Background: The record gives the reactivity of an RNA of 177 nucleotides to 2A3 and DMS. For DMS the reverse transcriptase was MarathonRT. The RNA was probed in 150 mM KOAc, 10 mM MgCl2 and 150 mM bicine (pH 8.5) at 24 C.

RNA sequence: GGGAACGACUCGAGUAGAGUCGAAAAUGCGGAACCGGUGAGUACACCGGAAUUGCCAGGACGACCGGGUCCUUUCCAUUGGAUCAAACCCGCUCAAUGCCUGGAGAUUUGGGCGUGCCCCCGCAAGGGGAUAGAUGUGAUUCGUCACAUCUAUCCCAAAAGAAACAACAACAACAAC
Reactivity to 2A3 in 0.01 (KOAc 150mM, MgCl2 10mM, bicine 150mM(pH8.5), 24C), signal-to-noise 9, nucleotides 027 to 126: u080g000c000g000g010a020a030c010c000g000g010u010g000a120g200u030a010c000a000c000c000g000g010a000a000u000u010g030c000c000a000g010g010a020c030g010a010c020c030g000g000g020u050c030c000u030u040u050c060c040a180u100u220g010g000a020u060c090a040a090a100c010c000c000g000c010u020c020a050a110u260g040c000c000u010g010g000a020g010a020u020u010u020g020g000g020c130g060u120g040c000c000c000c000c000g000c010a050a070g040
Reactivity to DMS in 0.01 (KOAc 150mM, MgCl2 10mM, bicine 150mM(pH8.5), 24C), signal-to-noise 8, nucleotides 027 to 126: u020g010c010g010g010a050a040c010c000g010g000u010g000a080g000u010a040c010a010c000c000g020g010a000a000u000u020g000c000c000a020g000g010a060c080g010a020c130c000g010g000g000u010c060c070u000u000u010c070c100a230u030u020g010g000a070u000c230a070a140a040c000c000c010g010c300u000c010a150a070u030g020c000c010u000g010g000a080g000a020u000u000u000g010g000g010c020g030u000g000c000c000c000c000c000g000c020a080a080g010